The data come from the RNA Mapping Database (RMDB), library OK3TST. Chemical mapping of a 207-nucleotide RNA with DMS and 2A3. The 2A3 profile rests on 2,035 reads. 2A3 adducts were read by reverse transcription with SuperScript II with manganese. Reactivities are given for positions 27 through 156.

[RMDB]
RNA sequence: GGGAACGACUCGAGUAGAGUCGAAAACACGUAGAACUUAAAGGUUAGUGAUGAGUUGACAGUUAGUCAUUUUAUGACCGCCGCGUGGUGACUCGUCACCGCCAACGUGGAGGGAACAAAGGUCAGGAACACGUCACCAAAUUAAUAAUUAACAUGCCCUUGAGUCAUUUUUCGAAAUGACUCAAGGAAAAGAAACAACAACAACAAC
Reactivity to DMS in 0.01 (KOAc 150mM, MgCl2 10mM, bicine 150mM(pH8.5), 24C), signal-to-noise 1, nucleotides 027 to 156: c020a120c080g030u020a080g020a080a100c100u020u000a140a190a070g000g020u010u000a000g000u000g020a060u000g000a200g020u000u010g020a120c060a090g040u010u010a030g060u000c000a150u000u000u000u010a150u030g000a060c020c010g000c020c000g000c020g040u000g060g040u010g000a060c000u000c210g010u010c030a080c060c030g010c030c000a120a030c000g050u030g020g020a130g020g000g000a060a100c000a000a050a130g000g000u000c000a120g000g000a100a080c060a040c040g010u000c010a060c020c000a010a020a080u000u000a040a140u000a060a100u020u000a000a180c060a130u000g010c100
Reactivity to 2A3 in 0.01 (KOAc 150mM, MgCl2 10mM, bicine 150mM(pH8.5), 24C), signal-to-noise 3, nucleotides 027 to 156: c040a000c050g100u100a030g070a170a020c050u120u080a190a080a030g070g000u050u090a030g010u040g040a060u040g020a020g040u040u040g020a010c010a050g070u120u150a020g000u080c010a000u040u060u110u120a110u070g010a020c010c000g030c000c000g030c050g040u050g010g020u010g010a020c010u020c030g060u020c040a010c020c000g000c020c030a090a060c000g020u030g020g010a060g040g060g020a110a000c050a070a080a010g030g010u020c030a020g020g020a010a020c030a030c070g060u030c010a030c050c030a060a060a000u060u060a060a040u110a050a030u110u060a060a020c030a070u170g030c010